This 177-nucleotide RNA was probed chemically with 2A3 and DMS. The DMS profile rests on 1,126 reads. The 2A3 profile rests on 1,806 reads. It was measured as part of the RMDB library TTRDEL. The RNA was probed in 150 mM KOAc, 10 mM MgCl2 and 150 mM bicine (pH 8.5) at 24 C.
RNA sequence: GGGAACGACUCGAGUAGAGUCGAAAAGAUAUGGAUUAGGACAUGCUGAUCCUUCGGAAACGAAGGGCCAGCAACAGCCUACUGUCCUAAGUCGCUAUGACAAGGUUUCUUCGGAAACCUUGUCAAAGACCUACUAGUCGUUCGCGACUAGUAGGUCAAAAGAAACAACAACAACAAC
Reactivity to 2A3 in 0.01 (KOAc 150mM, MgCl2 10mM, bicine 150mM(pH8.5), 24C), signal-to-noise 2, nucleotides 027 to 126: g050a020u130a120u300g100g000a040u020u060a010g010g030a020c110a160u130g000c000u010g010a020u010c020c000u000u000c010g020g060a090a020a070c020g000a010a000g000g030g030c000c000a010g080c030a010a000c020a010g000c000c030u050a130c090u120g000u000c000c010u020a060a030g100u010c010g000c210u130a130u260g000a000c000a020a000g000g040u050u040u010c060u150u300c300g010g000a000a000a000c010c000u000u000g000u030c000a000a000a000
Reactivity to DMS in 0.01 (KOAc 150mM, MgCl2 10mM, bicine 150mM(pH8.5), 24C), signal-to-noise 2, nucleotides 027 to 126: g000a100u020a210u020g000g010a070u000u000a030g000g050a020c020a160u010g010c000u000g000a040u000c000c000u000u000c000g000g000a090a180a200c010g000a000a000g000g030g020c040c000a000g010c000a020a070c230a180g040c040c040u000a090c300u000g010u000c010c000u000a010a080g010u000c060g000c180u010a110u000g000a000c000a020a020g020g030u000u000u010c000u000u010c180g010g000a000a020a000c000c000u010u000g000u000c000a000a060a090